[RMDB]
RNA sequence: GGGAACGACUCGAGUAGAGUCGAAAAGUGCGAAGCUAUGAAAGAAAAAGAGGUGUGUGUGCUCUGAAAUUUUGUAGCGUUAGUCUACUCGCACACACACGAGUAGUUUUACAAAGCACGAAAGAAAGGGUAAACAAUAGUUCGCUAUUGUUUACCCAAAAGAAACAACAACAACAAC
Reactivity to 2A3 in 0.01 (KOAc 150mM, MgCl2 10mM, bicine 150mM(pH8.5), 24C), signal-to-noise 2, nucleotides 027 to 126: g010u000g010c010g010a020a030g010c020u020a030u090g120a110a110a130g250a060a230a070a030a010g130a120g030g080u010g000u000g000u000g000u000g010c020u040c100u200g120a200a250a240u230u240u110u110g000u000a000g000c040g020u070u140a020g020u010c000u000a000c000u010c010g000c010a010c010a000c000a000c000a000c010g000a000g000u000a000g000u000u000u000u090a090c070a010a130a010g000c000a000c050g050a040a120a020g170a040a060a010
Reactivity to DMS in 0.01 (KOAc 150mM, MgCl2 10mM, bicine 150mM(pH8.5), 24C), signal-to-noise 7, nucleotides 027 to 126: g010u010g000c010g000a050a040g000c000u000a010u000g000a070a220a140g010a120a140a090a110a070g010a120g030g010u000g000u000g020u000g000u000g000c010u030c250u010g010a050a080a120u020u030u030u030g020u000a010g000c000g030u050u030a070g000u050c000u010a010c000u010c170g000c020a000c000a000c010a000c000a040c000g000a110g010u000a000g010u010u000u000u010a200c220a080a050a210g000c010a010c010g000a090a080a100g010a080a090a090